[RMDB]
RNA sequence: GGGAACGACUCGAGUAGAGUCGAAAACACAACAAACAGAAUCUUUAUCCAAUAUCUAUUUAGCACUCACUGAAGCAGGUAUCACAAUAAGUAAUCUCUUGAGUGUUCAUCCUUUAACAAAACAAAACAUGACGAUCGACUUCGGUCGAUCGUCAUGAAAAGAAACAACAACAACAAC
Reactivity to 2A3 in 0.01 (KOAc 150mM, MgCl2 10mM, bicine 150mM(pH8.5), 24C), signal-to-noise 1, nucleotides 027 to 126: c000a000c050a110a180c040a000a260a000c020a000g000a000a220u020c050u040u000u000a200u060c070c060a030a030u000a060u000c030u000a130u000u100u020a000g000c000a020c180u040c030a110c080u000g000a000a000g220c030a000g030g000u000a000u000c270a000c000a130a060u050a110a140g120u220a000a150u020c000u000c000u040u020g000a000g000u050g000u010u000c000a030u030c000c000u000u080u300a040a150c110a050a000a000a030c060a000a300a020a000

Background: This 177-nucleotide RNA was probed chemically with 2A3. The RNA was probed in 150 mM KOAc, 10 mM MgCl2 and 150 mM bicine (pH 8.5) at 24 C. Reactivities are given for positions 27 through 126.